[RMDB]
Structure probing data (DMS and 2A3) for a 207-nucleotide construct. The 2A3 profile rests on 1,269 reads. For 2A3 the reverse transcriptase was SuperScript II with manganese.

RNA sequence: GGGAACGACUCGAGUAGAGUCGAAAAAAUGCUAACUGUACACAAUGGCAGUGGUUUUGCUAUUACAACAAAACCUUCUCCUACUCCUGACCAGGAUUCUUAUGGAGGAGCUUCUGUGUGUUUGUAUUGUAGGGCUCAUGUUGCACACCCUAAUAUGCGUAGCUAUCGUGUUCGCACGAUAGCUACGAAAAGAAACAACAACAACAAC
Reactivity to DMS in 0.01 (KOAc 150mM, MgCl2 10mM, bicine 150mM(pH8.5), 24C), signal-to-noise 1, nucleotides 027 to 156: a020a060u000g020c010u010a150a070c020u000g000u010a090c080a060c020a060a130u000g010g050c040a110g030u000g030g020u000u000u000u000g020c020u000a270u000u030a200c040a040a010c000a000a010a030a010c000c000u000u010c030u010c020c010u000a050c060u000c000c010u000g010a110c120c060a090g000g000a120u000u010c080u000u010a140u000g020g000a050g020g010a030g030c140u000u000c050u000g000u010g040u010g000u000u000u010g000u000a110u000u000g050u010a030g030g000g000c020u050c040a110u000g020u000u000g000c000a130c100a030c000c000c020u000a030a090u000a160u000g010
Reactivity to 2A3 in 0.01 (KOAc 150mM, MgCl2 10mM, bicine 150mM(pH8.5), 24C), signal-to-noise 3, nucleotides 027 to 156: a000a000u090g020c040u080a080a070c020u100g100u160a020c030a000c010a070a160u110g020g000c030a040g030u040g000g000u000u000u000u040g020c000u060a100u290u240a110c060a130a000c000a000a030a010a000c000c000u030u040c000u000c000c000u000a060c020u030c000c000u080g120a220c040c060a020g040g060a100u160u100c050u110u280a120u190g020g000a000g020g010a010g010c010u100u050c050u050g050u000g030u000g030u030u070u060g050u030a050u040u110g070u110a040g050g000g000c020u070c140a100u100g020u100u020g060c060a010c000a020c060c010c010u000a030a130u150a150u250g040